[RMDB]
Source: RMDB library OK3TST, as collected in RNAgym. An RNA of 207 nucleotides, treated with 2A3 and read out base by base. For 2A3 the reverse transcriptase was SuperScript II with manganese. 2A3 is a SHAPE reagent: it acylates the 2'-hydroxyl of flexible nucleotides of all four kinds.

RNA sequence: GGGAACGACUCGAGUAGAGUCGAAAACAUCACCGACCCGGACACCUUCGGCGCGGGACGGCUGGACGGCCCUAUGCCGCGCAACCCCGAAGAGCUGCUGGCGUUCGUGUGCGACGAACGGUGCAAGAACCGGGCCGGACACACGCAGGAGGAGCUGCGCUCCUAACAUCUUCGGAUGUUAGGAGCGAAAAGAAACAACAACAACAAC
Reactivity to 2A3 in 0.01 (KOAc 150mM, MgCl2 10mM, bicine 150mM(pH8.5), 24C), signal-to-noise 1, nucleotides 027 to 156: c010a070u150c070a000c030c010g000a010c000c000c000g000g000a030c050a010c030c010u050u050c000g090g000c020g000c000g010g020g040a000c110g000g000c000u100g150g170a120c140g030g010c010c000c020u090a010u030g050c010c040g050c000g000c020a010a120c020c040c000c030g000a020a000g010a020g130c020u060g000c030u060g140g170c020g000u000u000c010g000u100g040u100g190c060g060a030c010g000a040a050c030g010g090u030g010c010a050a060g010a140a000c000c000g000g000g000c000c000g010g040a000c000a000c020a010c050g030c010a010g000g140a040g030g010a020g100c020u010g020